RNA sequence: GGGAACGACUCGAGUAGAGUCGAAAAGAUGGCGCAGUCUACCCGUCCAAUGGUCUCAUUGUCCGUGAUGGUGAUGAGUUGCUUUUGAUUGAUACAGCGUGGGGUGCGAAAAACACAGCGGCACUUCAGUAAAUCACACGUUCGCGUGUGAUUUACUAAAAGAAACAACAACAACAAC
Reactivity to DMS in 0.01 (KOAc 150mM, MgCl2 10mM, bicine 150mM(pH8.5), 24C), signal-to-noise 2, nucleotides 027 to 126: g000a090u020g000g050c030g020c020a110g000u000c050u000a200c030c010c010g000u010c050c030a040a060u000g000g000u010c050u000c020a040u000u000g000u000c000c030g000u010g020a140u000g020g040u000g020a040u010g000a050g010u010u000g020c020u000u000u000u000g000a130u010u010g000a120u010a140c120a070g010c030g080u000g010g000g000g020u010g010c020g000a030a050a050a080a090c130a040c130a080g000c070g010g000c030a040c040u020u010c080
Reactivity to 2A3 in 0.01 (KOAc 150mM, MgCl2 10mM, bicine 150mM(pH8.5), 24C), signal-to-noise 2, nucleotides 027 to 126: g070a020u060g030g010c030g100c050a000g020u050c010u070a100c010c000c030g010u030c040c010a020a040u120g060g000u000c010u000c030a030u060u020g100u100c000c050g110u180g180a150u300g020g020u030g000a020u010g020a010g000u060u190g050c020u040u070u080u080g080a140u040u120g050a070u090a180c050a040g020c030g060u040g010g020g000g010u010g040c040g060a110a020a010a060a010c090a010c040a070g100c040g070g000c020a020c000u090u080c000
An RNA of 177 nucleotides, treated with DMS and 2A3 and read out base by base. The data come from the RNA Mapping Database (RMDB), library OK2TRN. For DMS the reverse transcriptase was MarathonRT. Reactivities are given for positions 27 through 126. Reactivities are rounded to 0.1 and cut off at 0 and 3.